[RMDB]
RNA sequence: GGGAACGACUCGAGUAGAGUCGAAAACCUACCCAAGGUGAAAGCUCCUUCUCUCGCAAUGUGUGACUCAUGAUUCUCAUGACCCCUGGUUGGAGAGAUCCGGACUAGGAGCCAGGGGGCCUCUGAUAAAGCCAGACGCACUUCGGUGCGUCUGGAACCGGAUAUAGUAGUUCGCUACUAUAUCCGGAAAAGAAACAACAACAACAAC
Reactivity to 2A3 in 0.01 (KOAc 150mM, MgCl2 10mM, bicine 150mM(pH8.5), 24C), signal-to-noise 1, nucleotides 027 to 156: c040c000u040a050c000c020c010a080a050g000g000u050g080a210a050a030g040c040u040c000c000u020u040c020u000c020u020c020g060c100a070a060u120g040u020g030u060g110a050c000u000c030a010u040g090a160u210u100c110u020c020a040u140g020a110c010c000c000c000u060g090g000u030u090g060g020a060g010a010g000a040u070c080c080g050g150a030c020u150a060g000g060a000g010c020c000a000g010g020g010g030g000c020c000u090c070u070g000a120u140a150a090a040g070c000c010a000g010a000c000g020c000a010c020u020u090c170g030g050u000g010c000g000u020c000u040g010g000a000a000